Chemical mapping of a 207-nucleotide RNA with DMS and 2A3. The DMS profile rests on 2,341 reads. For DMS the reverse transcriptase was MarathonRT. 2A3 adducts were read by reverse transcription with SuperScript II with manganese.

RNA sequence: GGGAACGACUCGAGUAGAGUCGAAAAGCGAAAGUUGCCAUGAGACCGUAACUUUCGUAGUCAUUGAUAAAGGGGCAGGUCUCGCUCUUUUGUCACUGCGGUUGCCUAGAGGCAUGGUCGUUUACCGAAAAGAGCUCAUUCUUCGGAAUGAGCUCAAGCUACACUGUGAGUUCGCUCACAGUGUAGCAAAAGAAACAACAACAACAAC
Reactivity to DMS in 0.01 (KOAc 150mM, MgCl2 10mM, bicine 150mM(pH8.5), 24C), signal-to-noise 1, nucleotides 027 to 156: g020c030g000a040a000a030g000u000u000g000c000c030a250u000g000a130g050a040c080c120g000u000a020a060c000u000u000u000c060g030u010a020g020u020c060a170u010u000g020a080u000a010a050a100g010g000g030g020c080a100g000g010u010c060u010c040g000c030u000c000u070u000u000u000g000u000c000a030c100u000g000c050g010g030u000u000g040c030c040u040a120g000a100g020g020c080a120u010g000g030u000c020g020u010u010u000a100c020c020g000a080a090a040a130g000a040g030c000u000c000a010u000u000c000u000u010c300g080g000a030a000u000g010a030g030c000u010c000a000a040
Reactivity to 2A3 in 0.01 (KOAc 150mM, MgCl2 10mM, bicine 150mM(pH8.5), 24C), signal-to-noise 2, nucleotides 027 to 156: g030c000g020a000a010a010g020u020u020g020c060c000a080u100g070a050g030a150c060c030g020u010a000a000c000u000u000u000c000g000u010a030g030u000c020a020u000u060g030a000u030a040a010a000g030g000g010g000c020a030g020g170u030c060u020c040g020c010u040c000u030u020u010u010g010u020c000a000c010u010g020c030g070g030u080u060g000c010c000u060a130g000a130g130g030c020a030u050g090g040u010c010g010u010u010u040a290c020c010g020a040a020a000a020g010a000g000c000u020c000a010u000u000c020u050u090c160g110g000a000a000u000g000a000g030c000u000c000a010a000